[RMDB]
RNA sequence: GGGAACGACUCGAGUAGAGUCGAAAACGGAUUAUAUUCGUAUAAUCCGGGAUUUGGGGCGUGGCCAAGUGGUAAGGCAGCGGGUUUUGAUCCCGUUAUUCGGAGGUUCGAAUCCUUCCGUCCCAGCCAGUAUCGAGUUACGCUUCGGCGUAACUAAUUAAUGGUGUUUCUUCGGAAACACCAUUAAAAAAGAAACAACAACAACAAC
Reactivity to DMS in 0.01 (KOAc 150mM, MgCl2 10mM, bicine 150mM(pH8.5), 24C), signal-to-noise 2, nucleotides 027 to 156: c010g010g010a010u000u010a020u000a040u010u010c230g030u000a010u010a010a030u000c000c000g030g010g040a110u000u010u000g020g020g020g020c030g020u010g030g050c030c020a090a070g050u000g000g010u000a070a300g020g010c030a220g000c030g000g010g040u000u000u000u000g010a090u000c010c000c020g030u010u000a060u000u010c010g010g000a030g000g030u000u000c030g000a300a110u000c020c000u010u000c010c010g050u000c000c030c010a120g080c040c010a150g000u000a160u000c080g000a080g010u000u010a000c000g000c000u000u020c300g030g020c010g040u000a040a040c010u020a010a040
Reactivity to 2A3 in 0.01 (KOAc 150mM, MgCl2 10mM, bicine 150mM(pH8.5), 24C), signal-to-noise 1, nucleotides 027 to 156: c000g000g010a020u010u000a000u000a000u090u010c150g010u040a000u000a000a010u000c020c000g030g000g010a070u140u120u030g000g000g000g040c010g000u010g030g000c010c000a020a000g040u130g060g300u260a060a030g020g000c000a010g070c020g020g050g010u030u140u080u300g090a100u180c000c000c000g000u020u040a010u030u080c000g010g010a010g010g030u000u000c010g010a010a010u000c010c000u010u000c000c000g030u030c020c010c000a000g060c000c000a010g060u070a080u150c130g050a030g020u000u000a010c000g000c020u030u050c300g090g000c000g000u000a000a050c000u010a000a010